[RMDB]
RNA sequence: GGGAACGACUCGAGUAGAGUCGAAAAGAUAUGGAACAUUUCUCGAUAAGAAUGAUUCGGAAACGAAUUAAUUCUUUUGACGAGACCAUUCCUAAGUCAAACCACCUACGCUUCGGCGUAGGUGGAACUUUCCUUGGAAGUUCGCUUCCAAGGAAAGAAAAGAAACAACAACAACAAC
Reactivity to 2A3 in 0.01 (KOAc 150mM, MgCl2 10mM, bicine 150mM(pH8.5), 24C), signal-to-noise 2, nucleotides 027 to 126: g010a020u270a010u210g000g050a180a040c070a300u090u240u010c010u000c000g050a090u060a160a020g010a000a000u010g000a000u050u010c000g020g060a040a060a050c000g000a000a020u030u070a170a110u010u030c010u000u070u050u220g200a120c020g000a000g020a020c010c000a010u030u010c000c000u050a140a060g130u090c100a120a020a140c010c000a010c030c000u000a010c000g030c000u020u120c300g160g000c000g020u000a000g000g000u000g000g020a000a000
Reactivity to DMS in 0.01 (KOAc 150mM, MgCl2 10mM, bicine 150mM(pH8.5), 24C), signal-to-noise 2, nucleotides 027 to 126: g000a080u000a210u000g000g000a090a040c220a260u030u000u000c000u000c000g010a190u000a000a020g000a000a000u000g010a010u000u000c000g000g000a130a050a130c010g000a020a020u000u000a040a040u000u010c000u000u000u000u010g020a180c110g000a000g000a050c300c140a150u000u000c000c000u010a040a130g020u000c090a050a110a160c000c000a010c010c000u000a010c010g020c000u000u000c250g020g010c000g010u000a000g000g010u000g000g000a000a040